[RMDB]
RNA sequence: GGGAACGACUCGAGUAGAGUCGAAAAGCCAGGUGCGCGUGUCCUGGAGUCCUGCAGAAGACCACAAUGCCCCCAUUGAGAGUAAGAGGCUUGAGCUCAGUGCCACCCCACCGUCACUUCUGCCAGCCACCAAUUGCAAUUUCGAUUGCAAUUGGUGAAAAGAAACAACAACAACAAC
Reactivity to DMS in 0.01 (KOAc 150mM, MgCl2 10mM, bicine 150mM(pH8.5), 24C), signal-to-noise 3, nucleotides 027 to 126: g000c020c020a020g010g010u010g020c080g020c110g030u000g010u010c010c010u000g010g010a180g010u010c010c020u000g000c050a070g010a100a050g010a100c080c040a060c100a040a120u010g010c030c020c020c050c020a090u000u000g010a120g010a090g010u010a090a090g010a120g000g010c030u000u000g010a120g010c030u000c040a060g020u000g000c040c040a120c040c010c010c020a050c100c070g000u000c060a070c070u000u000c020u010g010c000c100a100g000c180